[RMDB]
RNA sequence: GGGAACGACUCGAGUAGAGUCGAAAAGGAGCGAAAGCGAGUCCGAAACGGGCGACCAUAGUCGGCGGCCGCAGACGCGAAGCCGGGUGAGCUACCCGUGGGCAGGCUGAAGCGGGGGUAAGACCCCACGACUCAGCGUGUUCGCACGCUGAGUCGUAAAAGAAACAACAACAACAAC
Reactivity to 2A3 in 0.01 (KOAc 150mM, MgCl2 10mM, bicine 150mM(pH8.5), 24C), signal-to-noise 1, nucleotides 027 to 126: g050g010a030g060c000g150a040a000a000g010c010g050a010g020u080c030c000g080a000a190a000c030g000g010g000c030g030a010c040c010a060u120a000g090u080c020g000g000c000g020g020c050c030g050c060a060g000a120c140g000c000g040a060a000g030c000c030g000g090g030u010g030a000g060c050u060a070c000c030c030g020u080g000g020g010c090a090g110g000c000u000g010a020a000g080c040g010g000g000g030g040u020a040a040g030a080c000c000c000c040
Reactivity to DMS in 0.01 (KOAc 150mM, MgCl2 10mM, bicine 150mM(pH8.5), 24C), signal-to-noise 2, nucleotides 027 to 126: g000g010a220g040c070g150a070a210a300g060c010g030a170g010u000c030c000g020a060a060a010c170g000g000g000c290g030a120c100c030a090u010a080g030u000c030g010g000c070g000g010c010c080g070c020a080g050a110c160g000c050g000a070a080g000c000c030g000g000g030u000g000a040g010c020u010a010c000c060c110g070u030g010g020g000c030a090g000g000c010u000g020a050a190g000c030g000g000g000g010g010u000a140a100g030a300c010c000c000c100

Structure probing data (2A3 and DMS) for a 177-nucleotide construct. The reactions ran in a buffer of 150 mM KOAc, 10 mM MgCl2 and 150 mM bicine (pH 8.5), at 24 C. DMS adducts were read by reverse transcription with MarathonRT. For 2A3 the reverse transcriptase was SuperScript II with manganese.